The record gives the reactivity of an RNA of 177 nucleotides to 2A3. The data come from the RNA Mapping Database (RMDB), libraries RFM100 and RFMREP.
RNA sequence: GGGAACGACUCGAGUAGAGUCGAAAAAAGCAGUUCUCCAACAGAAAUAUGUGCAUGAAGUGAUGGUUUGGGUAACCAUUUCAUCUUUUCAUGUCAUAUAUCUCCUGCCUCUCACGGUUUCAUCUGUCCCUAAGUCAGUAUUCGUACUGACUUAGGGAAAAGAAACAACAACAACAAC
Reactivity to 2A3 in 0.01 (KOAc 150mM, MgCl2 10mM, bicine 150mM(pH8.5), 24C), signal-to-noise 6, nucleotides 027 to 126: a010a010g070c070a040g010u100u040c060u020c060c030a070a060c040a080g070a010a070a000u020a010u010g040u100g020c000a010u000g000a000a000g020u010g040a000u000g000g030u010u010u000g040g010g020u120a100a170c000c000a000u000u000u000c000a000u000c000u040u090u000u010c000a010u010g010u030c000a000u010a000u000a010u010c030u010c000c000u020g040c000c010u020c000u020c000a050c120g080g020u020u070u050c050a110u020c060u130g070u050

The reactions ran in a buffer of 150 mM KOAc, 10 mM MgCl2 and 150 mM bicine (pH 8.5), at 24 C.